[RMDB]
RNA sequence: GGGAACGACUCGAGUAGAGUCGAAAAACUGGUUCGCCAGUGAAUUACCGUAGGACCGAACUACUUCCGAUGUGGAGCGAAGAACAAGGCUUCGAAAGAGGCCUUGGGAGCUCCACUAGGAAGCGGUCCUAAACGGCCGACGGUUCUUCGGAACCAAAGGCUGAUACCAUUUCGAUGGUAUCAGCCUAAAAGAAACAACAACAACAAC
Reactivity to 2A3 in 0.01 (KOAc 150mM, MgCl2 10mM, bicine 150mM(pH8.5), 24C), signal-to-noise 1, nucleotides 027 to 156: a020c020u010g000g040u070u030c180g060c070c000a060g000u050g070a020a090u120u060a100c010c010g000u010a020g020g030a030c000c000g040a100a110c070u200a100c010u230u030c010c000g030a080u300g020u020g010g000a000g000c010g200a300a050g030a070a020c000a000a000g010g010c000u000u000c000g010a060a040a030g000a020g010g010c070c000u000u000g000g000g010a010g000c000u000c000c000a000c000u000a000g000g000a000a000g000c000g000g000u000c010c000u000a040a000a030c010g000g050c010c030g120a110c160g020g010u010u060c020u010u080c120g050g020a020a030c010c000a070a070